Annotation
The data come from the RNA Mapping Database (RMDB), library TTRDEL. An RNA of 177 nucleotides, treated with DMS and 2A3 and read out base by base.
RNA sequence: GGGAACGACUCGAGUAGAGUCGAAAAGAUAUGGACGGUAGUAGGGAGAAGUUCGGAAACGAACCUUCAUCGAUCUACAGCCGUCCUAAGUCAAAUCACCGAGACACCUUCGGGUGUCUCGGUGAAACCAUACACACGCGUUCGCGCGUGUGUAUGGAAAAGAAACAACAACAACAAC
Reactivity to DMS in 0.01 (KOAc 150mM, MgCl2 10mM, bicine 150mM(pH8.5), 24C), signal-to-noise 2, nucleotides 027 to 126: g000a010u000a300u010g020g000a010c010g010g020u000a160g040u000a010g010g000g030a250g010a020a030g010u000u030c010g000g000a050a060a170c010g010a000a000c140c110u020u010c040a130u000c100g000a250u030c010u000a010c000a300g000c010c010g000u000c000c010u010a000a100g010u000c020a060a190a080u000c000a010c000c030g000a010g000a020c000a010c000c000u010u010c200g020g000g040u000g010u000c000u000c000g000g000u000g000a000a050a060
Reactivity to 2A3 in 0.01 (KOAc 150mM, MgCl2 10mM, bicine 150mM(pH8.5), 24C), signal-to-noise 1, nucleotides 027 to 126: g020a020u100a050u120g000g000a000c000g000g000u060a020g000u000a020g220g120g000a020g020a060a000g000u030u020c020g000g050a050a050a020c020g000a010a030c030c030u060u060c040a290u270c020g090a080u000c020u020a000c030a020g020c010c000g020u000c000c000u010a010a010g020u030c010a020a070a170u020c000a000c000c000g000a000g010a010c040a020c040c010u100u170c300g050g000g030u000g000u000c000u000c020g000g010u000g000a000a020a010
Notes
Reactivities are given for positions 27 through 126. High DMS reactivity at an A or C suggests that its Watson-Crick edge is free. The 2A3 profile rests on 1,755 reads. The DMS profile rests on 917 reads. 2A3 adducts were read by reverse transcription with SuperScript II with manganese.